[RMDB]
RNA sequence: GGGAACGACUCGAGUAGAGUCGAAAAAUACAGCGUAAUCGAGCGGAGGUAAACGGCACUCCGAAAAUCCGGUACGAUUAUGAUCCCACUGCGUCGACGCUAGAUGCAGAACCGGAUUGCCGAGGAACCAUAAGAUCUCCUUCGGGAGAUCUUAUGGAAAAGAAACAACAACAACAAC
Reactivity to 2A3 in 0.01 (KOAc 150mM, MgCl2 10mM, bicine 150mM(pH8.5), 24C), signal-to-noise 2, nucleotides 027 to 126: a000u170a050c060a020g060c020g060u090a060a110u070c060g010a080g120c020g000g020a020g000g050u070a160a080a050c000g010g030c020a020c040u040c020c010g010a070a030a000a010u010c000c000g020g030u090a040c050g050a110u060u130a050u280g050a040u010c020c000c000a040c000u010g000c000g000u000c010g030a110c100g010c220u090a040g000a020u010g010c010a020g000a040a010c000c000g050g010a050u000u020g020c000c020g000a020g000g060a010a030
Reactivity to DMS in 0.01 (KOAc 150mM, MgCl2 10mM, bicine 150mM(pH8.5), 24C), signal-to-noise 2, nucleotides 027 to 126: a110u020a060c210a040g010c070g020u000a070a080u000c040g010a120g020c000g010g010a050g000g010u030a030a040a060c060g030g020c060a070c050u000c010c010g000a030a040a020a050u010c000c000g000g000u020a130c120g010a050u010u010a040u010g000a110u000c000c010c030a290c000u000g010c010g000u000c000g000a170c220g030c220u000a050g000a010u000g000c000a000g000a110a070c060c000g000g000a020u000u000g020c040c020g020a110g010g000a070a150

The record gives the reactivity of an RNA of 177 nucleotides to 2A3 and DMS. The data come from the RNA Mapping Database (RMDB), library M2PK90. 2A3 adducts were read by reverse transcription with SuperScript II with manganese. Conditions: 150 mM KOAc, 10 mM MgCl2 and 150 mM bicine (pH 8.5), 24 C. The 2A3 profile rests on 2,119 reads. The DMS profile rests on 1,825 reads.